RNA sequence: GGGAACGACUCGAGUAGAGUCGAAAAUUCACGCUGUACGUCAAGCUUCGGGACGAGGUUCAUGGACCCUUCUUCGUCAACGACAUGUCCUUCGCAGGGCUCGUAUGUCUUGUGACCUCUCUGGGGACUAAAUGAAUGCCUUCGGGCAUUCAUUUAGAAAAGAAACAACAACAACAAC
Reactivity to DMS in 0.01 (KOAc 150mM, MgCl2 10mM, bicine 150mM(pH8.5), 24C), signal-to-noise 2, nucleotides 027 to 126: u000u000c050a040c080g010c050u000g020u000a060c110g010u010c110a060a090g010c090u000u000c070g020g000g000a060c060g000a030g010g010u000u000c040a030u000g000g000a150c050c050c060u010u000c040u000u000c050g020u000c020a060a120c060g000a060c110a070u000g000u000c020c010u000u000c130g000c110a050g000g010g050c060u000c200g010u000a030u010g000u010c030u000u010g000u000g030a050c110c030u000c050u010c040u010g020g000g000g000a290
Reactivity to 2A3 in 0.01 (KOAc 150mM, MgCl2 10mM, bicine 150mM(pH8.5), 24C), signal-to-noise 1, nucleotides 027 to 126: u070u010c000a020c050g010c060u090g020u110a030c010g040u050c040a080a040g010c020u060u050c080g040g000g020a040c000g030a030g060g000u070u090c040a070u130g150g050a110c030c010c000u050u020c030u040u100c020g040u030c060a070a050c050g060a000c010a060u090g050u050c040c000u020u020c050g030c080a030g000g010g000c030u010c080g140u110a060u110g060u030c000u050u080g000u040g040a030c020c010u010c010u000c030u030g010g000g020g030a020

Chemical mapping of a 177-nucleotide RNA with DMS and 2A3.
Values are in units of 0.01, from 0 to 300, in steps of 10.
Source: RMDB library OK2TST, as collected in RNAgym.
2A3 is a SHAPE reagent: it acylates the 2'-hydroxyl of flexible nucleotides of all four kinds.
The RNA was probed in 150 mM KOAc, 10 mM MgCl2 and 150 mM bicine (pH 8.5) at 24 C.
For 2A3, 1,342 sequencing reads were counted.